[RMDB]
RNA sequence: GGGAACGACUCGAGUAGAGUCGAAAAAAAGAUAUGGACAGGUCUCUAGCGUGGCCUUGGAUUUACAGGAUAAGUAUCGGAAACGAUACGAAACCUGUUGUCAGGCUCGGGCCUGUCCUAAGUCAAACCAUAGUCAUGGGUUCGCCCAUGACUAUGGAAAAGAAACAACAACAACAAC
Reactivity to 2A3 in 0.01 (KOAc 150mM, MgCl2 10mM, bicine 150mM(pH8.5), 24C), signal-to-noise 2, nucleotides 027 to 126: a010a000a020g080a060u110a060u180g000g000a010c010a010g000g030u040c090u010c030u300a080g040c140g280u170g030g000c000c000u050u170g140g010a010u300u220u210a000c000a000g040g000a030u050a210a040g000u020a000u020c020g000g000a050a100a020c000g000a000u020a010c000g010a020a010a020c000c000u000g010u030u020g000u000c000a000g090g000c000u020c010g000g020g000c000c020u000g000u010c000c000u010a010a000g000u000c030a010a040a110
Reactivity to DMS in 0.01 (KOAc 150mM, MgCl2 10mM, bicine 150mM(pH8.5), 24C), signal-to-noise 2, nucleotides 027 to 126: a080a100a090g000a060u000a300u010g000g010a020c000a040g020g010u000c020u000c140u010a110g040c190g010u010g000g030c000c050u010u000g000g010a080u010u030u010a010c020a010g000g000a060u000a100a230g010u000a000u000c000g000g000a080a070a220c000g000a010u010a000c000g000a110a210a160c000c000u000g010u000u010g010u000c020a060g000g010c000u000c160g020g000g010c000c000u000g010u000c000c010u010a020a090g000u000c020a130a100a180
Structure probing data (2A3 and DMS) for a 177-nucleotide construct. DMS (dimethyl sulfate) methylates the pairing face of unpaired adenines and cytosines. The 2A3 profile rests on 3,878 reads. The DMS profile rests on 2,045 reads.